[RMDB]
Chemical mapping of a 177-nucleotide RNA with DMS. It was measured as part of the RMDB library OK2TRN. Values cover nucleotides 27 to 126. The DMS profile rests on 1,023 reads.

RNA sequence: GGGAACGACUCGAGUAGAGUCGAAAAAUAAACCCCUUCCUUCUUUAACUCGGUGUCUGAUAAGUUUUGUCUGCAGCUCGAUUUCUUGGUUCCCUGACUGGGAAGCGAGGUGAAUGGCGGAUGGUCAACGAUUGUACGUGUUCGCACGUACAAUCGUAAAAGAAACAACAACAACAAC
Reactivity to DMS in 0.01 (KOAc 150mM, MgCl2 10mM, bicine 150mM(pH8.5), 24C), signal-to-noise 1, nucleotides 027 to 126: a110u020a060a070a180c050c030c000c060u010u000c050c000u000u010c040u030u000u000a050a140c120u010c070g040g000u010g050u000c010u000g000a060u000a100a100g000u010u000u000u010g000u010c000u000g010c060a070g000c040u000c030g000a090u000u000u000c030u000u020g010g000u010u000c020c010c030u010g020a100c130u030g000g010g000a050a050g000c030g010a050g030g000u000g020a060a120u000g010g040c080g000g020a060u000g020g000u010c080a120